The record gives the reactivity of an RNA of 177 nucleotides to 2A3. 2A3 adducts were read by reverse transcription with SuperScript II with manganese. It was measured as part of the RMDB library RFM100. For 2A3, 379 sequencing reads were counted. The RNA was probed in 150 mM KOAc, 10 mM MgCl2 and 150 mM bicine (pH 8.5) at 24 C.

[RMDB]
RNA sequence: GGGAACGACUCGAGUAGAGUCGAAAAGGCACACUUAAUUAUUAAAGGUAAUACACUAUGUCCGGUAAAAUGACUGGUAUCGUAAAAUGGUUCAACGCUGACAAAGGCUUCGGCUUCAUCACUCCUGGUGAGUGACGUCGUUCGCGACGUCACUCACAAAAGAAACAACAACAACAAC
Reactivity to 2A3 in 0.01 (KOAc 150mM, MgCl2 10mM, bicine 150mM(pH8.5), 24C), signal-to-noise 1, nucleotides 027 to 126: g070g000c010a000c000a000c300u050u060a060a150u070u230a150u040u130a300a000a000g020g000u170a040a000u000a290c300a130c090u190a030u040g060u000c060c060g070g000u040a000a130a160a160u070g040a150c000u000g000g030u000a000u190c000g000u010a000a000a000a230u000g110g000u010u060c000a020a020c010g000c000u000g000a010c040a000a070a000g040g000c000u000u000c000g010g000c000u000u000c000a000u000c000a000c030u000c000c120u030g000